[RMDB]
RNA sequence: GGGAACGACUCGAGUAGAGUCGAAAAGUGACACUAGGUGAGAUUCGUGGUGUUUAGUGUUGGGUAGGAUGAUAUAUAAGGAGUAUAUCGAUAUUCAAUACUUAUAUAUCUUUCUCACUCUCAUCACCUAUUAUAUUAUCUUCGGAUAAUAUAAUAGAAAAGAAACAACAACAACAAC
Reactivity to 2A3 in 0.01 (KOAc 150mM, MgCl2 10mM, bicine 150mM(pH8.5), 24C), signal-to-noise 9, nucleotides 027 to 126: g040u030g020a010c010a000c050u030a020g120g020u060g070a080g020a100u090u070c050g020u080g010g000u010g000u020u030u060a030g010u010g010u030u060g000g010g000u020a010g010g050a020u030g000a000u000a000u000a000u000a020a020g060g010a040g070u040a030u010a040u150c070g050a040u040a040u120u060c030a070a050u030a200c000u010u000a000u000a000u000a000u000c000u000u030u010c010u000c010a020c010u010c000u020c020a050u020c000a010c000
Reactivity to DMS in 0.01 (KOAc 150mM, MgCl2 10mM, bicine 150mM(pH8.5), 24C), signal-to-noise 6, nucleotides 027 to 126: g010u010g000a050c040a030c020u000a070g000g010u020g000a060g000a080u020u010c100g030u010g010g000u010g010u010u010u010a060g000u000g010u010u000g000g000g000u020a020g020g000a030u010g000a000u000a000u000a010u000a020a030g000g000a070g020u000a020u010a150u050c150g000a070u000a010u000u010c020a080a180u030a300c010u000u000a010u010a010u000a010u000c000u000u000u010c000u000c100a050c020u000c030u020c060a040u000c020a030c050